[RMDB]
RNA sequence: GGGAACGACUCGAGUAGAGUCGAAAACCGGUGCGGGCGGCUUGGGAGAGCCUUCCUCACGGAUCCUCAAGGGGAGAACCACCGAUGGAGAACACCCUCCUCAUCGGACUGUCGCGGCAGAUGAUGCAAAUGGGGUAUAAUUCGUUAUACCCCAUUUAAAAGAAACAACAACAACAAC
Reactivity to 2A3 in 0.01 (KOAc 150mM, MgCl2 10mM, bicine 150mM(pH8.5), 24C), signal-to-noise 9, nucleotides 027 to 126: c000c000g020g050u050g010c040g000g010g000c020g000g000c010u040u050g050g040g010a100g010a010g020c000c000u030u030c010c000u020c000a020c020g020g020a050u050c010c000u090c060a100a120g020g010g010g000a060g020a060a060c010c010a030c010c020g020a030u070g060g020a030g010a060a030c040a090c060c010c000u010c010c010u030c020a030u020c010g020g040a050c040u090g020u070c050g010c020g090g000c020a010g020a130u120g000a020u060g060c030
Reactivity to DMS in 0.01 (KOAc 150mM, MgCl2 10mM, bicine 150mM(pH8.5), 24C), signal-to-noise 9, nucleotides 027 to 126: c020c010g020g010u010g020c130g010g000g020c300g010g000c030u010u010g000g030g010a160g010a070g010c040c030u000u000c020c020u000c040a060c060g000g000a090u010c020c020u000c100a130a110g010g000g000g010a070g010a090a100c070c070a160c040c020g000a040u010g000g010a060g000a080a120c140a120c120c060c030u000c020c020u000c020a030u000c030g000g000a150c080u010g000u010c070g010c060g000g000c020a050g000a080u010g010a080u010g010c120